[RMDB]
RNA sequence: GGGAACGACUCGAGUAGAGUCGAAAAGUAUGAUGACACAGGUAUCAUUAAAUUGAAAAGCUUUUGGAUACGUCGUUUAAAACGUUUAUUACCAGCAGUCAUAGUUUUAUUAAUGGUUGUAGGGACAAAACUGGUAUAAGUUCGCUUAUACCAGUUUAAAAGAAACAACAACAACAAC
Reactivity to DMS in 0.01 (KOAc 150mM, MgCl2 10mM, bicine 150mM(pH8.5), 24C), signal-to-noise 8, nucleotides 027 to 126: g010u000a030u020g010a020u000g010a110c120a140c190a110g020g000u010a060u010c020a030u000u020a040a070a090u030u020g010a070a110a110a120g010c060u000u010u020u010g010g000a060u010a020c060g010u020c070g000u010u010u040a060a070a100a040c090g010u010u020u030a070u040u010a070c020c030a120g010c060a100g000u000c010a010u000a020g000u020u010u010u020a070u030u030a080a060u020g010g010u000u000g010u010a040g000g010g000a140c140a030
Reactivity to 2A3 in 0.01 (KOAc 150mM, MgCl2 10mM, bicine 150mM(pH8.5), 24C), signal-to-noise 5, nucleotides 027 to 126: g120u100a040u190g090a040u030g010a010c040a020c050a180g170g040u150a010u050c010a020u050u270a120a140a160u120u140g130a140a080a020a030g040c030u020u060u140u120g050g020a020u010a090c030g050u040c010g020u050u090u110a080a150a030a000c020g000u020u160u020a060u060u120a090c000c010a010g010c010a010g020u030c010a000u020a070g050u000u050u110u090a140u150u090a140a070u120g080g000u000u020g020u040a070g040g000g030a010c090a000
Chemical mapping of a 177-nucleotide RNA with DMS and 2A3. Conditions: 150 mM KOAc, 10 mM MgCl2 and 150 mM bicine (pH 8.5), 24 C. 2A3 is a SHAPE reagent: it acylates the 2'-hydroxyl of flexible nucleotides of all four kinds. 2A3 adducts were read by reverse transcription with SuperScript II with manganese.